[RMDB]
Chemical mapping of a 207-nucleotide RNA with DMS and 2A3. Conditions: 150 mM KOAc, 10 mM MgCl2 and 150 mM bicine (pH 8.5), 24 C. For DMS the reverse transcriptase was MarathonRT. 2A3 adducts were read by reverse transcription with SuperScript II with manganese.

RNA sequence: GGGAACGACUCGAGUAGAGUCGAAAAGAACGGCAUCAAGGCCAUGGGCGGAUGGCUCAAGGGCCAGUUGAUCAGCUUCGCGAAGACCAUGAUCCCCGGCCCGAUCGCCAAGGCCCUCGGCAUCGCGAGCCCCUCGCGCGUCAUGGCCAAGAUCGGCGUAUACUCUCUCUUUCGAGAGAGAGUAUACAAAAGAAACAACAACAACAAC
Reactivity to DMS in 0.01 (KOAc 150mM, MgCl2 10mM, bicine 150mM(pH8.5), 24C), signal-to-noise 2, nucleotides 027 to 156: g000a140a130c060g020g000c040a070u000c020a090a300g010g000c000c000a030u010g020g000g030c020g000g030a270u000g000g010c020u000c060a180a220g020g020g000c000c010a040g010u000u010g050a050u010c010a110g010c080u000u010c040g030c100g020a190a300g020a120c070c000a120u020g000a040u000c010c140c020c030g000g000c000c000c000g010a150u030c090g010c010c030a060a300g020g000c000c010c020u000c070g000g000c070a070u000c090g030c030g020a060g010c040c040c040c080u000c010g000c020g010c090g020u000c020a080u000g030g050c010c000a070a240g010a070u000c010g000g010c170
Reactivity to 2A3 in 0.01 (KOAc 150mM, MgCl2 10mM, bicine 150mM(pH8.5), 24C), signal-to-noise 3, nucleotides 027 to 156: g130a080a030c050g050g030c060a060u040c040a080a160g010g000c000c020a010u030g020g000g010c020g070g060a080u120g030g000c010u020c080a060a110g010g000g000c000c040a010g010u030u080g000a000u000c000a010g030c040u080u080c080g040c130g140a080a010g020a050c060c070a180u040g000a010u020c020c020c000c000g010g000c020c030c010g010a030u080c080g000c020c000a000a040g080g020c010c020c000u020c040g000g000c000a040u070c010g010c030g030a020g020c010c000c000c020u030c000g100c000g010c020g120u090c010a020u040g000g000c010c010a030a010g020a040u050c030g060g000c040